This 207-nucleotide RNA was probed chemically with DMS and 2A3. As a SHAPE reagent, 2A3 marks flexible, mostly unpaired nucleotides at the ribose 2'-OH.

[RMDB]
RNA sequence: GGGAACGACUCGAGUAGAGUCGAAAAGUGCCUCGUCGGCCCGGCAUGCCAACCUGAUCCGAAGUUCAAGGUGGUUUCUCUGGCAUUCCAGAGAGAUGCGCGUCGGAAGAACCGACGAACAAACCUUAAAACAAAACGACGUUCGCGUCGUUUUGAACUUUCCUAUGCAGUUCGCUGCAUAGGAAAGAAAAGAAACAACAACAACAAC
Reactivity to DMS in 0.01 (KOAc 150mM, MgCl2 10mM, bicine 150mM(pH8.5), 24C), signal-to-noise 1, nucleotides 027 to 156: g000u000g000c020c040u020c010g010u000c010g020g040c020c000c000g020g070c040a100u000g020c010c070a070a050c010c050u010g000a060u000c090c040g000a170a100g000u000u010c040a040a010g000g020u000g030g000u000u020u010c010u000c010u000g010g000c260a190u000u000c000c000a040g040a080g050a030g010a050u000g030c040g030c010g010u000c020g030g010a060a120g030a180a080c000c000g020a020c030g040a020a020c060a040a110a130c020c130u000u000a050a030a140a250c000a000a010a010a000c000g000a040c000g020u000u000c300g030c030g010u000c000g000u010u010u020u000g010a050a110
Reactivity to 2A3 in 0.01 (KOAc 150mM, MgCl2 10mM, bicine 150mM(pH8.5), 24C), signal-to-noise 3, nucleotides 027 to 156: g050u050g080c030c000u020c000g010u000c000g010g010c030c000c000g000g020c000a030u140g010c010c050a070a100c000c020u010g000a020u030c040c120g210a240a120g030u080u080c080a130a020g020g000u010g000g000u010u080u000c000u000c000u010g020g000c100a150u300u100c000c000a000g000a010g000a010g000a060u130g030c050g010c020g040u000c000g000g020a060a050g020a080a080c000c000g010a000c000g020a020a010c020a010a060a050c030c040u180u290a050a080a030a060c000a000a000a000a020c000g020a010c020g040u080u090c250g010c010g100u020c010g010u010u000u000u010g000a000a010